Chemical mapping of a 177-nucleotide RNA with DMS and 2A3. It was measured as part of the RMDB library OK2TRN. The DMS profile rests on 1,709 reads.
RNA sequence: GGGAACGACUCGAGUAGAGUCGAAAAUUGUUUUGGGAAAGAUAUGGGUGGAUGAAAAUAUCAAGACUAAAAAUCACACUAAUAGCGUUAUAUUGUUUUUGGUUCGAGACCGUCGUCCUACAAGAACGAACGACUUGUCGUUCGCGACAAGUCGUUCAAAAGAAACAACAACAACAAC
Reactivity to DMS in 0.01 (KOAc 150mM, MgCl2 10mM, bicine 150mM(pH8.5), 24C), signal-to-noise 2, nucleotides 027 to 126: u000u010g010u020u000u000u000g000g010g010a100a100a070g010a110u020a080u010g010g010g020u000g000g010a140u000g010a040a080a100a090u000a090u000c040a090a100g000a060c030u000a010a030a020a060a080u000c080a070c060a050c060u000a080a080u000a070g020c080g050u000u000a060u010a110u020u000g010u000u000u000u000u000g010g000u000u000c050g010a210g000a060c080c080g020u000c030g010u000c000c010u010a080c220a060a110g030a050a070c210
Reactivity to 2A3 in 0.01 (KOAc 150mM, MgCl2 10mM, bicine 150mM(pH8.5), 24C), signal-to-noise 1, nucleotides 027 to 126: u090u020g000u000u050u040u010g060g030g000a140a250a140g060a050u110a050u150g000g020g010u070g000g010a070u070g060a090a060a000a000u210a070u030c050a110a020g020a010c000u080a000a070a040a000a040u110c040a050c000a000c070u090a100a100u010a070g030c020g020u000u030a080u000a060u100u070g110u030u030u040u030u020g060g010u040u050c070g000a070g000a060c020c000g010u060c010g000u000c030c010u050a080c040a040a130g100a060a030c110
2A3 adducts were read by reverse transcription with SuperScript II with manganese.
Conditions: 150 mM KOAc, 10 mM MgCl2 and 150 mM bicine (pH 8.5), 24 C.
2A3 is a SHAPE reagent: it acylates the 2'-hydroxyl of flexible nucleotides of all four kinds.